Structure probing data (DMS and 2A3) for a 177-nucleotide construct.
RNA sequence: GGGAACGACUCGAGUAGAGUCGAAAAGAAGUCCGACACGCUGUCGCGGGGCGAUUUAGCACCUUUCCCGGGAAAGGGCCCGGAGGGAUUUAGGCACAUUUAUUAGAUCAGUGCCGAUCUAAAGAAAAGCACUCAUAUAGUUCGCUAUAUGAGUGCUAAAAGAAACAACAACAACAAC
Reactivity to DMS in 0.01 (KOAc 150mM, MgCl2 10mM, bicine 150mM(pH8.5), 24C), signal-to-noise 2, nucleotides 027 to 126: g020a110a080g020u000c030c040g010a150c070a130c110g000c060u000g020u000c080g010c050g020g010g020g000c030g000a080u010u000u000a070g020c070a200c030c010u000u010u000c040c030c040g000g000g020a080a060a100g000g010g000c030c030c030g030g010a100g000g010g020a090u000u000u010a080g000g010c000a010c060a130u000u000u000a120u020u020a100g010a090u010c100a090g010u010g000c010c020g010a030u000c010u000a080a070a140g000a060a070a120
Reactivity to 2A3 in 0.01 (KOAc 150mM, MgCl2 10mM, bicine 150mM(pH8.5), 24C), signal-to-noise 1, nucleotides 027 to 126: g070a070a000g080u020c040c010g000a010c010a010c020g090c030u100g000u190c000g010c010g040g060g000g000c030g000a010u030u000u200a040g040c000a090c020c000u000u060u080c000c000c000g050g000g000a130a100a050g090g040g000c000c000c040g010g000a060g040g010g020a000u060u030u090a060g030g070c000a000c020a020u060u150u110a210u120u200a180g110a230u190c110a050g000u000g090c020c010g020a020u000c010u080a130a040a040g160a000a060a000
High 2A3 reactivity points to a flexible backbone, as in loops and unpaired stretches. For DMS the reverse transcriptase was MarathonRT. Values cover nucleotides 27 to 126. Conditions: 150 mM KOAc, 10 mM MgCl2 and 150 mM bicine (pH 8.5), 24 C.